RNA sequence: GGGAACGACUCGAGUAGAGUCGAAAAGAUAUGGACACUACCCACCUGCGAAAGGACGUUGAAAUCGGAAACGAUGGAGUCCUGAGCAGAGGUGUCCUAAGUCAAAAGUCAAACUUCGGUUUGACAACUUAUUUGCCUACUUCGGUAGGCAAAUAAGAAAAGAAACAACAACAACAAC
Reactivity to DMS in 0.01 (KOAc 150mM, MgCl2 10mM, bicine 150mM(pH8.5), 24C), signal-to-noise 3, nucleotides 027 to 126: g000a120u010a080u000g010g010a010c000a010c010u000a170c010c010c010a300c160c000u000g000c000g000a100a070a010g010g010a030c010g010u000u000g010a020a130a010u000c000g010g000a120a060a200c020g010a010u000g000g000a150g000u000c000c000u000g000a300g000c030a000g010a040g020g000u000g000u000c000c000u010a060a080g010u010c140a070a080a110a100g000u000c000a000a010a020c010u000u020c240g010g020u000u000u000g000a000c010a080a080
Reactivity to 2A3 in 0.01 (KOAc 150mM, MgCl2 10mM, bicine 150mM(pH8.5), 24C), signal-to-noise 2, nucleotides 027 to 126: g030a070u160a100u210g010g000a010c020a030c040u260a280c010c010c020a040c020c000u040g010c050g120a170a020a020g000g040a010c030g200u300u060g060a040a030a010u000c010g000g050a120a040a000c000g020a030u000g000g050a010g030u000c000c000u000g000a000g000c000a010g040a000g010g010u020g000u060c000c020u020a120a000g110u080c140a010a020a070a170g010u000c000a000a000a000c010u040u030c230g130g020u000u010u020g010a000c010a010a000

The record gives the reactivity of an RNA of 177 nucleotides to DMS and 2A3.
Values cover nucleotides 27 to 126.
For 2A3, 2,449 sequencing reads were counted.
2A3 adducts were read by reverse transcription with SuperScript II with manganese.